[RMDB]
RNA sequence: GGGAACGACUCGAGUAGAGUCGAAAAUUCAGAAUACCAGUACGUUAUCUUCUGUCAAACAGCAGAUACGGCACAUGCUAACAACAUUAACAGAUUUAAUGUUGCAAUCACUCGUGCCCAAAAAGGUGAGGUAGUACAUGUUCGCAUGUACUACCUCAAAAGAAACAACAACAACAAC
Reactivity to 2A3 in 0.01 (KOAc 150mM, MgCl2 10mM, bicine 150mM(pH8.5), 24C), signal-to-noise 2, nucleotides 027 to 126: u070u050c020a000g070a120a050u100a160c000c010a010g070u090a010c030g060u140u060a020u040c030u020u000c000u020g090u110c060a170a100a100c000a070g010c020a000g000a000u010a010c020g000g000c010a000c000a020u040g000c010u020a060a060c010a000a000c000a000u000u010a030a010c040a130g200a230u090u060u050a000a030u000g000u010u010g050c030a090a040u000c000a020c050u080c080g010u060g000c000c000c050a030a180a060a010a000g030g030u020
Reactivity to DMS in 0.01 (KOAc 150mM, MgCl2 10mM, bicine 150mM(pH8.5), 24C), signal-to-noise 1, nucleotides 027 to 126: u000u000c070a100g040a230a040u030a110c100c140a030g000u000a070c260g000u000u070a040u000c060u010u040c000u040g000u010c150a180a140a300c030a030g000c080a000g000a010u000a080c200g000g000c060a010c040a050u000g010c150u000a250a070c000a000a010c000a000u000u000a000a040c200a130g000a150u000u000u000a000a000u000g000u000u000g010c110a130a080u000c000a040c140u000c150g000u000g000c000c040c220a030a060a090a070a000g000g010u040
Chemical mapping of a 177-nucleotide RNA with 2A3 and DMS. For DMS the reverse transcriptase was MarathonRT. It was measured as part of the RMDB library 15KREP. The 2A3 profile rests on 1,322 reads. The RNA was probed in 150 mM KOAc, 10 mM MgCl2 and 150 mM bicine (pH 8.5) at 24 C.